[RMDB]
RNA sequence: GGGAACGACUCGAGUAGAGUCGAAAAGUGACCUCCCCGGAAGCCCAGCUAAUCCAGGUUUUAAAGAGGAGUUGGAACAAAGGUGGUGCUUAUGGGAUGUAUGGAGCUGUGGGAUGUGGGAGAGGACAUGUGGACCUAUAUUCGUAUAGGUCCACAUAAAAGAAACAACAACAACAAC
Reactivity to DMS in 0.01 (KOAc 150mM, MgCl2 10mM, bicine 150mM(pH8.5), 24C), signal-to-noise 3, nucleotides 027 to 126: g040u010g010a190c030c020u000c050c000c000c050g010g030a120a140g020c020c000c010a030g010c010u000a120a120u000c020c020a080g000g000u000u010u000u000a040a090a140g030a110g030g010a050g000u010u000g010g000a070a070c150a070a130a060g010g000u000g000g020u000g010c050u000u000a110u010g010g010g010a080u010g000u000a040u000g020g000a150g000c060u000g000u010g000g010g000a060u000g020u000g020g000g000a100g000a070g000g000a060c170
Reactivity to 2A3 in 0.01 (KOAc 150mM, MgCl2 10mM, bicine 150mM(pH8.5), 24C), signal-to-noise 2, nucleotides 027 to 126: g040u050g090a120c000c000u010c000c010c000c000g030g060a050a000g040c000c010c020a000g120c010u000a010a030u000c000c000a030g000g030u040u020u060u240a160a090a020g060a040g040g060a130g060u050u060g080g010a030a040c050a120a170a030g070g010u040g010g040u100g000c000u070u110a040u100g020g000g040a030u070g020u050a130u080g030g020a030g000c080u030g050u090g060g030g000a110u130g090u130g070g000g020a150g000a000g000g040a020c010
Source: RMDB library OK2TRN, as collected in RNAgym.
This 177-nucleotide RNA was probed chemically with DMS and 2A3.
Reactivities are given for positions 27 through 126.
Conditions: 150 mM KOAc, 10 mM MgCl2 and 150 mM bicine (pH 8.5), 24 C.